[RMDB]
RNA sequence: GGGAACGACUCGAGUAGAGUCGAAAAAUCGGCCCGUUCGCGGGCCGAUACAGGCGGAGGCUCGCACCUAGCGACCGGCGCAAGGACGCACGGUACUGCGAUUUGACUGUGGAUUCGUCCACAGUAACAAAGAUGAUUAGUUCGCUAAUCAUCUUUGAAAAGAAACAACAACAACAAC
Reactivity to DMS in 0.01 (KOAc 150mM, MgCl2 10mM, bicine 150mM(pH8.5), 24C), signal-to-noise 9, nucleotides 027 to 126: a040u000c010g010g010c010c000c000g030u000u010c190g030c020g020g010g020c000c000g000a000u000a010c120a080g000g010c040g010g010a120g010g010c090u000c030g020c060a100c080c050u000a110g010c030g000a050c020c020g010g010c020g010c040a150a100g010g010a130c030g010c020a070c030g010g010u000a060c080u000g010c020g000a150u000u010u010g010a040c000u000g010u000g010g000a030u000u010c200g010u000c000c000a000c000a000g010u000a050a160
Reactivity to 2A3 in 0.01 (KOAc 150mM, MgCl2 10mM, bicine 150mM(pH8.5), 24C), signal-to-noise 7, nucleotides 027 to 126: a000u000c000g010g010c020c020c010g020u030u020c220g020c030g070g000g030c000c000g000a000u000a000c000a010g050g040c030g020g060a040g110g010c060u030c070g030c000a050c010c040u040a040g030c020g060a030c010c030g020g010c010g000c040a140a180g180g020a120c020g000c060a130c080g040g000u080a140c050u090g030c010g060a060u090u040u260g080a010c000u000g000u010g000g000a010u050u040c170g040u000c040c000a000c000a010g000u000a000a020
The record gives the reactivity of an RNA of 177 nucleotides to DMS and 2A3. DMS adducts were read by reverse transcription with MarathonRT. The DMS profile rests on 19,361 reads. Values cover nucleotides 27 to 126. It was measured as part of the RMDB library M2PK50.